[RMDB]
The data come from the RNA Mapping Database (RMDB), library OK1LIB.
This 177-nucleotide RNA was probed chemically with DMS and 2A3.
DMS adducts were read by reverse transcription with MarathonRT.
Conditions: 150 mM KOAc, 10 mM MgCl2 and 150 mM bicine (pH 8.5), 24 C.
The 2A3 profile rests on 204,019 reads.

RNA sequence: GGGAACGACUCGAGUAGAGUCGAAAAGAUCACUUCGGCUUGUGAGCGAUACGCGCUCCGUUGUGCUCAUAAUUAUUCGCGUUACGCACGACCGUGUAACAUCCCGGCACGAGACGAAUCUGGUCGCUCUCGCUGUACGUUUCGACGUGCAGUGGGGAAAAGAAACAACAACAACAAC
Reactivity to DMS in 0.01 (KOAc 150mM, MgCl2 10mM, bicine 150mM(pH8.5), 24C), signal-to-noise 9, nucleotides 027 to 126: g010a030u010c020a030c210u000u000c010g010g000c050u000u010g010u010g000a050g010c090g010a160u010a050c100g010c040g000c180u010c060c110g010u010u010g010u010g000c030u000c130a100u020a050a060u010u020a090u020u020c110g010c100g000u000u000a080c140g010c030a050c050g000a050c060c040g010u000g010u000a050a070c100a090u010c030c040c010g000g000c010a030c020g000a050g000a030c020g000a020a030u010c130u000g000g000u000c010g000c120
Reactivity to 2A3 in 0.01 (KOAc 150mM, MgCl2 10mM, bicine 150mM(pH8.5), 24C), signal-to-noise 9, nucleotides 027 to 126: g010a020u020c000a000c020u010u010c010g020g000c020u040u050g020u040g050a040g030c030g030a040u040a110c060g020c000g010c050u020c040c030g020u020u040g020u030g010c010u020c080a070u090a150a080u140u160a110u100u130c070g000c030g070u040u060a030c030g000c010a010c030g030a020c010c030g010u020g010u050a070a050c020a100u060c020c010c000g030g040c010a010c020g040a030g020a010c010g010a010a030u020c030u030g010g000u010c010g010c020